[RMDB]
RNA sequence: GGGAACGACUCGAGUAGAGUCGAAAAGACGUCAUCAUCGCGAUGGGCUCGUCGGGUCUGCAUUCCAAUGGGUACUCGCUGGUCCGCAAGGUGUUGCUGGAGAUCGACCGGAUGAAUCUGGCCGGUCGUGUUAUGUUCUCUUCGGAGAACAUAACACAAAAGAAACAACAACAACAAC
Reactivity to DMS in 0.01 (KOAc 150mM, MgCl2 10mM, bicine 150mM(pH8.5), 24C), signal-to-noise 6, nucleotides 027 to 126: g010a120c080g010u010c040a040u000c040a070u000c080g010c230g010a050u010g020g010g010c010u000c050g020u000c040g020g010g010u000c020u000g030c080a080u010u000c100c160a100a090u010g010g010g010u010a040c050u000c030g010c040u000g000g010u010c020c030g000c090a080a140g010g010u000g010u000u000g000c030u010g010g000a110g010a060u000c030g010a020c000c000g010g010a060u010g000a110a110u010c050u000g000g010c000c010g010g020u000c020
Reactivity to 2A3 in 0.01 (KOAc 150mM, MgCl2 10mM, bicine 150mM(pH8.5), 24C), signal-to-noise 5, nucleotides 027 to 126: g050a010c030g020u060c010a040u000c000a010u070c050g010c040g090a060u050g010g020g020c020u020c030g120u040c000g020g000g010u020c030u080g080c020a050u150u080c020c010a020a070u100g030g020g000u050a040c000u000c020g020c030u030g000g030u010c010c010g010c030a020a030g030g010u040g030u040u060g000c050u070g030g070a090g000a080u040c030g010a010c010c000g020g000a050u090g120a070a190u050c050u050g060g000c010c000g000g010u010c020

This 177-nucleotide RNA was probed chemically with DMS and 2A3.
For 2A3, 9,990 sequencing reads were counted.
The data come from the RNA Mapping Database (RMDB), library OK2TST.
The DMS profile rests on 10,316 reads.